[RMDB]
RNA sequence: GGGAACGACUCGAGUAGAGUCGAAAAGAUAUGGAAGAAUACGUGAUGGCUGAUGACCCACCCGUCGGAAACGACGGUGUGGCAAGGCCAUCAUUCUUCCUAAGUCAAACGACGCUUCGGCGUCGAACUUAAUAAACUUGUUCGCAAGUUUAUUAAGAAAAGAAACAACAACAACAAC
Reactivity to DMS in 0.01 (KOAc 150mM, MgCl2 10mM, bicine 150mM(pH8.5), 24C), signal-to-noise 9, nucleotides 027 to 126: g000a040u000a300u010g000g000a020a000g010a060a120u010a130c300g020u010g010a010u010g000g000c000u000g010a120u010g010a120c300c010c000a010c010c010c000g000u000c000g010g000a130a070a220c010g010a020c000g000g010u010g030u000g000g000c030a050a070g000g010c000c000a000u000c010a010u000u000c000u000u000c000c000u010a030a130g000u010c030a110a130a240c020g010a010c000g020c010u000u010c160g030g010c000g020u000c000g010a030a110
Reactivity to 2A3 in 0.01 (KOAc 150mM, MgCl2 10mM, bicine 150mM(pH8.5), 24C), signal-to-noise 7, nucleotides 027 to 126: g020a030u090a040u200g010g010a010a000g010a060a070u250a300c300g100u150g040a010u010g010g000c020u030g030a300u180g050a210c000c010c000a010c010c020c000g000u010c000g010g030a090a050a030c010g000a000c000g000g070u120g010u010g010g010c010a040a070g020g000c000c000a000u000c000a000u000u000c000u000u000c000c000u000a120a020g010u010c040a050a070a130c030g010a000c000g010c000u040u120c300g180g000c000g000u000c010g000a010a000